[RMDB]
RNA sequence: GGGAACGACUCGAGUAGAGUCGAAAAGAGAGGUUCGCCUCUCAAAAAGCGUACUACCUACUGCAAUCAGUUUGCGAAGCUCGGUCCCAAAUAGGACCGAGCGAAGUAUAAACGAUUGAACUACAGUAGGUAUCGCAAAAAACCACUUCGGUGGUAACAUCCUUUAUUGUUUCGACAAUAAAGGAUGAAAAGAAACAACAACAACAAC
Reactivity to DMS in 0.01 (KOAc 150mM, MgCl2 10mM, bicine 150mM(pH8.5), 24C), signal-to-noise 2, nucleotides 027 to 156: g010a060g000a030g020g020u000u010c140g020c000c000u000c000u000c010a020a030a200a110a150g000c020g040u000a130c090u000a030c010c000u010a000c020u020g010c000a040a150u000c040a070g020u000u000u000g010c030g000a140a300g000c030u000c010g010g020u010c000c010c020a060a130a210u010a060g010g000a000c000c000g050a010g000c000g000a020a090g050u000a080u000a070a070a020c010g000a080u030u010g000a080a090c010u000a030c030a040g000u000a010g020g000u000a010u000c010g030c030a010a080a060a080a110a030c010c000a020c010u000u010c250g050g010u020g010g010u000a060a130
Reactivity to 2A3 in 0.01 (KOAc 150mM, MgCl2 10mM, bicine 150mM(pH8.5), 24C), signal-to-noise 2, nucleotides 027 to 156: g010a000g000a000g010g000u090u150c210g090c070c010u060c050u040c020a000a000a000a040a060g030c020g030u030a080c050u010a000c000c000u010a000c000u010g050c000a010a000u010c000a030g000u000u040u030g020c030g100a140a000g000c000u010c000g000g020u000c000c010c050a170a160a050u210a050g000g000a000c000c000g000a000g000c000g010a000a000g000u060a020u250a160a020a000c000g010a000u010u000g010a060a030c110u140a060c300a000g010u000a000g000g000u000a000u000c000g050c000a090a120a000a000a000a010c010c030a020c020u080u060c220g030g010u010g000g000u050a040a040

Source information:
An RNA of 207 nucleotides, treated with DMS and 2A3 and read out base by base. DMS adducts were read by reverse transcription with MarathonRT. Reactivities are given for positions 27 through 156. The reactions ran in a buffer of 150 mM KOAc, 10 mM MgCl2 and 150 mM bicine (pH 8.5), at 24 C. The data come from the RNA Mapping Database (RMDB), library RNAMAK. For 2A3 the reverse transcriptase was SuperScript II with manganese.